[RMDB]
RNA sequence: GGGAACGACUCGAGUAGAGUCGAAAAGGCGUGCCUAAUACAUGCAAGUCGAGCGCUGGAAGCUAAUUUCAUCCCUUCGGGAUGAAAUUAGUGGAAAGAGCGGCGGACGGGUGAGUAACACGUGGGCUACGCAAUUUCUAUUCGUAGAAAUUGCGUAAAAAGAAACAACAACAACAAC
Reactivity to DMS in 0.01 (KOAc 150mM, MgCl2 10mM, bicine 150mM(pH8.5), 24C), signal-to-noise 4, nucleotides 027 to 126: g000g010c020g020u000g000c060c040u010a100a110u000a100c040a050u000g010c040a070a110g000u000c020g010a300g010c030g000c000u000g010g010a300a210g000c000u000a010a000u000u000u000c000a000u000c000c000c010u010u010c300g000g000g000a000u000g000a000a000a000u000u000a010g000u000g000g010a240a110a020g000a040g000c020g010g000c030g000g010a040c040g000g000g010u010g000a120g000u000a070a140c100a040c060g010u010g000g000g000c090
Reactivity to 2A3 in 0.01 (KOAc 150mM, MgCl2 10mM, bicine 150mM(pH8.5), 24C), signal-to-noise 2, nucleotides 027 to 126: g070g040c040g010u040g000c010c040u100a110a040u110a100c050a030u120g080c030a070a040g000u000c020g040a040g060c030g000c050u020g000g030a030a000g000c000u010a000a000u020u000u010c000a020u020c020c000c000u170u160c300g000g000g000a000u000g000a010a000a000u000u010a000g030u010g000g000a000a010a010g030a010g000c030g280g210c060g020g000a010c010g000g000g040u070g050a100g030u040a090a040c020a000c110g020u070g000g070g020c050